This 177-nucleotide RNA was probed chemically with 2A3. The data come from the RNA Mapping Database (RMDB), library OK1LIB. Values cover nucleotides 27 to 126. The reactions ran in a buffer of 150 mM KOAc, 10 mM MgCl2 and 150 mM bicine (pH 8.5), at 24 C.

RNA sequence: GGGAACGACUCGAGUAGAGUCGAAAACGGCAACAGAGACAGGGCAAGCGGCAGUCCCGAGCAGAAAGCGCCGGAGGGGCCGCCGCCCCCCAGCUUCGGAUCCCCAGACCCUGGCGCGGCUCGCUGCGGAACACGGCUUUUUCGAAAGCCGUGUUCCAAAAGAAACAACAACAACAAC
Reactivity to 2A3 in 0.01 (KOAc 150mM, MgCl2 10mM, bicine 150mM(pH8.5), 24C), signal-to-noise 1, nucleotides 027 to 126: c000g060g000c040a050a020c030a120g090a020g040a080c010a050g000g020g050c020a030a020g000c030g000g090c010a010g000u050c030c000c000g020a040g010c090a000g220a090a220a010g060c060g000c050c030g010g030a100g000g030g010g000c000c000g020c040c010g030c000c000c000c000c020c000a010g000c010u090u080c030g050g000a080u060c000c000c030c010a020g070a150c060c000c020u040g000g000c030g000c040g030g010c000u040c050g050c000u070g030c030